RNA sequence: GGGAACGACUCGAGUAGAGUCGAAAAGGCUCGAAGUUCGCUUCGAGCCAAAUAAAUUCAGCGGUAAUUCCUCCGCAAAUAUUACCGGUGAUGCGGAGGAAAAAACAACCGUGUUCGCACGGUUGAAUCUAUACGUGUACUUCGGUACACGUAUAGAAAAAGAAACAACAACAACAAC
Reactivity to DMS in 0.01 (KOAc 150mM, MgCl2 10mM, bicine 150mM(pH8.5), 24C), signal-to-noise 2, nucleotides 027 to 126: g000g010c000u000c000g020a010a020g010u010u020c260g020c000u000u000c000g010a030g020c000c000a010a020a030u000a060a080a080u010u010c080a070g010c080g030g010u000a040a210u000u000c010c010u000c000c000g010c000a010a020a110u000a170u000u000a110c060c040g010g000u000g000a160u000g030c010g010g010a020g010g000a000a000a030a080a020a040c020a010a020c000c000g040u000g000u000u010c210g010c010a020c030g000g000u000u010g010a070a100
Chemical mapping of a 177-nucleotide RNA with DMS. For DMS the reverse transcriptase was MarathonRT. Conditions: 150 mM KOAc, 10 mM MgCl2 and 150 mM bicine (pH 8.5), 24 C. Source: RMDB library M2PK50, as collected in RNAgym. Reactivities are given for positions 27 through 126.